[RMDB]
RNA sequence: GGGAACGACUCGAGUAGAGUCGAAAAUCGGUAAAAACCACGCCUAUAUACGUCCUGUCGGCGCAAGCCGACUAUGGUGAUAAACGGACGGUGUAAUAAACCCAUUGGACCCGGGGGCGGUACCCGGGCAUGCGAAGAGGUUCGCCUCUUCGCAUGCAAAAGAAACAACAACAACAAC
Reactivity to 2A3 in 0.01 (KOAc 150mM, MgCl2 10mM, bicine 150mM(pH8.5), 24C), signal-to-noise 4, nucleotides 027 to 126: u120c020g010g040u060a070a060a010a040a000c020c020a050c050g030c000c000u060a060u000a000u020a130c020g010u010c020c000u030g010u000c000g000g000c040g010c080a100a000g000c010c000g000a000c000u010a010u050g000g020u060g070a130u110a130a110a020c050g000g020a000c020g000g010u010g010u000a130a210u080a110a050a020c020c000c020a030u060u210g100g040a030c000c000c000g000g000g000g010g000c030g020g010u020a010c000c000c000g000g000
Reactivity to DMS in 0.01 (KOAc 150mM, MgCl2 10mM, bicine 150mM(pH8.5), 24C), signal-to-noise 3, nucleotides 027 to 126: u010c130g010g020u010a080a050a040a080a060c090c020a130c120g000c010c000u020a120u000a050u020a080c000g000u000c010c030u020g000u000c020g010g000c000g000c300a070a180g010c000c000g000a010c000u010a030u010g010g000u020g000a080u010a060a060a170c220g000g000a000c020g000g030u000g010u020a070a060u010a080a170a120c010c020c000a180u020u010g000g000a130c060c000c040g000g000g000g000g000c120g010g020u030a030c010c000c000g010g000